[RMDB]
RNA sequence: GGGAACGACUCGAGUAGAGUCGAAAAGUCGACCGGGUGGACUGCCGCACCAGCAUCGACGAGUUCACCGGGGAAGACCGCUUGCUGCGGCUGCGCUGGCCGUGUCCGGUACCCGGCGCCAUGCCGACGAUAAUGACAUAUUCGUAUGUCAUUAUCGAAAAGAAACAACAACAACAAC
Reactivity to DMS in 0.01 (KOAc 150mM, MgCl2 10mM, bicine 150mM(pH8.5), 24C), signal-to-noise 9, nucleotides 027 to 126: g000u000c010g010a300c060c010g010g020g030u000g010g010a020c010u000g010c040c020g010c140a140c090c090a080g010c100a110u000c030g010a050c020g010a060g010u000u000c010a030c010c010g000g010g010g010a110a190g000a030c010c060g010c090u000u000g010c090u010g010c020g000g010c020u000g010c050g010c020u000g010g010c050c050g010u010g010u010c120c040g000g010u010a110c270c030c010g000g010c010g010c060c220a050u010g010c010c010g000a200
Reactivity to 2A3 in 0.01 (KOAc 150mM, MgCl2 10mM, bicine 150mM(pH8.5), 24C), signal-to-noise 9, nucleotides 027 to 126: g010u010c010g020a050c020c010g130g010g010u020g000g010a020c010u060g090c070c030g000c040a120c070c070a050g090c030a110u140c050g090a090c020g010a010g010u020u020c010a010c020c010g040g000g000g020a070a030g020a020c010c020g040c070u070u160g030c050u080g020c010g020g000c010u040g000c040g000c020u030g030g000c010c020g090u100g150u170c140c040g040g030u080a130c030c020c000g000g000c010g000c020c020a090u200g010c010c010g030a050